RNA sequence: GGGAACGACUCGAGUAGAGUCGAAAAGAUAUGGAACGUCCUACCCACCACAAAGCUACUAUGAAGAGCGAAUUCUCGGAAACGAGAAUUCGCUUGGAGUAGCAUUUGUGAGGGACGUUCCUAAGUCGGAACAUUAUGUGUUCGCACAUAAUGUUCCAAAAGAAACAACAACAACAAC
Reactivity to 2A3 in 0.01 (KOAc 150mM, MgCl2 10mM, bicine 150mM(pH8.5), 24C), signal-to-noise 1, nucleotides 027 to 126: g050a040u300a180u300g020g010a000a000c010g000u000c010c040u190a300c040c030c020a040c010c010a000c010a020a000a000g040c000u000a010c010u060a300u300g070a090a030g020a010g090c020g030a010a000u000u020c000u030c000g060g030a170a060a050c030g040a000g030a000a000u000u000c000g000c000u000u000g000g020a000g000u010a010g020c010a150u000u010u020g000u010g010a010g000g040g030a000c020g000u000u000c000c000u000a020a010g200u170c100
Reactivity to DMS in 0.01 (KOAc 150mM, MgCl2 10mM, bicine 150mM(pH8.5), 24C), signal-to-noise 2, nucleotides 027 to 126: g010a220u010a170u010g000g000a030a010c000g000u010c010c020u010a200c030c020c030a300c090c020a010c000a000a030a060g010c020u010a000c000u010a280u000g060a170a120g020a000g010c020g000a000a000u000u000c000u000c000g000g010a070a080a100c000g010a060g010a040a000u020u000c000g000c000u020u000g010g010a070g130u000a000g020c000a070u000u000u040g000u000g000a050g030g030g000a020c000g010u000u000c000c040u000a010a080g010u010c160